[RMDB]
RNA sequence: GGGAACGACUCGAGUAGAGUCGAAAACGAGCACAAAGUGAUACUGGAGUGCUGACAGUCAGGGAGAAGAUCACAGCGCGAGAAAGAGAGAGCGCAGAAACUUCAAAAGCAUGAAAUGAUGCUGGGGCCAUUUCAUUUAGGAGCAAAUAACCCUGCAAUAAAUUAAAUGGUUCGCCAUUUAAUUUAUAAAAGAAACAACAACAACAAC
Reactivity to DMS in 0.01 (KOAc 150mM, MgCl2 10mM, bicine 150mM(pH8.5), 24C), signal-to-noise 2, nucleotides 027 to 156: c020g020a080g000c020a120c050a120a090a180g060u000g000a130u010a160c040u000g020g020a200g000u000g050c020u000g010a070c050a100g020u000c020a080g000g030g000a140g000a070a090g030a150u000c020a070c030a140g050c030g000c050g020a180g030a170a070a100g010a150g000a180g030a300g030c020g000c030a100g030a170a100a060c020u020u000c050a030a140a030a210g000c040a080u010g000a050a080a040u000g000a080u000g020c040u000g000g000g010g040c200c030a010u000u000u060c000a070u000u020u000a140g020g030a040g020c020a030a030a070u000a070a090c000c010c000u000g020c050a050
Reactivity to 2A3 in 0.01 (KOAc 150mM, MgCl2 10mM, bicine 150mM(pH8.5), 24C), signal-to-noise 2, nucleotides 027 to 156: c020g000a000g000c030a010c020a060a180a030g050u080g080a080u160a200c070u060g030g050a060g040u040g000c010u010g060a030c020a030g070u120c020a010g000g030g020a090g030a070a010g010a030u060c020a010c040a090g010c040g000c020g050a040g060a080a160a000g030a020g010a000g010a000g000c020g000c020a010g030a030a100a040c010u060u020c030a000a110a020a060g020c030a010u030g030a010a020a070u050g020a040u090g050c040u060g000g020g110g000c020c000a010u020u020u030c030a000u010u040u100a090g050g030a040g010c020a040a000a110u050a040a070c000c000c010u010g000c010a010

Chemical mapping of a 207-nucleotide RNA with DMS and 2A3.
The 2A3 profile rests on 1,709 reads.
Reactivities are given for positions 27 through 156.
Source: RMDB library OK3TST, as collected in RNAgym.